[RMDB]
RNA sequence: GGGAACGACUCGAGUAGAGUCGAAAAAGGCCAUUAAGCAAGAAGUCUCCCAAGCGGCCCCUGGAAGCCCCCAGUUUAUGCAGACCAUCCGGCUUGCGGUGCAGCAGUUUGACCCCACUGCCAAAGACAACUCCGUACCAUUCGUGGUACGGAGUUGAAAAGAAACAACAACAACAAC
Reactivity to 2A3 in 0.01 (KOAc 150mM, MgCl2 10mM, bicine 150mM(pH8.5), 24C), signal-to-noise 2, nucleotides 027 to 126: a000g000g000c040c030a110u120u170a050a020g050c030a030a060g040a070a060g070u030c040u010c010c020c010a030a000g120c030g050g000c000c010c000c000u050g000g050a030a030g000c000c000c000c020c020a010g000u030u050u050a120u160g030c020a010g070a020c010c020a020u030c010c010g070g030c060u010u040g000c030g070g020u060g000c010a030g030c010a030g040u040u170u230g100a110c020c020c000c000a050c010u020g010c020c010a010a090a000g030a020
Reactivity to DMS in 0.01 (KOAc 150mM, MgCl2 10mM, bicine 150mM(pH8.5), 24C), signal-to-noise 1, nucleotides 027 to 126: a090g000g000c030c050a130u040u020a040a030g000c000a080a010g020a120a090g010u010c040u000c060c000c010a120a090g000c060g000g020c020c010c030c000u000g010g050a200a220g050c090c010c000c000c010a110g000u000u000u030a010u020g010c120a120g010a040c040c030a130u000c040c020g000g000c070u030u010g000c010g040g010u010g040c050a150g010c000a030g000u000u000u010g010a220c050c020c040c100a190c070u010g010c010c070a070a100a070g000a170
The data come from the RNA Mapping Database (RMDB), library OK1LIB. Chemical mapping of a 177-nucleotide RNA with 2A3 and DMS. Values are in units of 0.01, from 0 to 300, in steps of 10. Values cover nucleotides 27 to 126.